[RMDB]
RNA sequence: GGGAACGACUCGAGUAGAGUCGAAAAGAUAUGGAGAUAUGAAUUGCAACAGCUCCGGGUCGGAAACGACCCAGGAGACAUGCAAUGUAUCUCCUAAGUCAAACUAGGGCCCUUCGGGGCCCUAGAAGUGAGAAAAUAGGUUCGCCUAUUUUCUCACAAAAGAAACAACAACAACAAC
Reactivity to 2A3 in 0.01 (KOAc 150mM, MgCl2 10mM, bicine 150mM(pH8.5), 24C), signal-to-noise 1, nucleotides 027 to 126: g000a010u050a040u060g000g010a000g000a000u050a000u080g300a180a270u070u060g020c300a300a070c170a300g030c000u000c000c040g080g000g010u010c010g040g000a000a080a020c010g000a030c000c000c010a020g030g030a000g020a050c070a090u300g010c020a000a000u090g010u000a000u000c000u000c000c000u000a020a010g000u000c050a100a000a180c000u000a000g040g030g020c160c000c000u010u030c260g080g030g020g040c050c000c010u000a000g000a010a000
Reactivity to DMS in 0.01 (KOAc 150mM, MgCl2 10mM, bicine 150mM(pH8.5), 24C), signal-to-noise 2, nucleotides 027 to 126: g010a040u000a090u030g000g010a010g000a020u000a020u010g010a100a110u010u000g010c000a180a130c160a200g020c010u000c010c000g010g010g030u000c000g030g020a030a030a070c010g000a020c000c000c000a020g020g000a000g000a030c040a160u020g020c000a000a010u000g010u000a010u000c000u000c000c000u000a010a070g010u000c000a100a100a300c000u000a000g000g010g030c000c000c010u000u020c270g040g020g020g000c000c000c000u000a010g000a050a060
Overview
Conditions: 150 mM KOAc, 10 mM MgCl2 and 150 mM bicine (pH 8.5), 24 C. This 177-nucleotide RNA was probed chemically with 2A3 and DMS. High DMS reactivity at an A or C suggests that its Watson-Crick edge is free. It was measured as part of the RMDB library TTRDES. For 2A3, 1,120 sequencing reads were counted.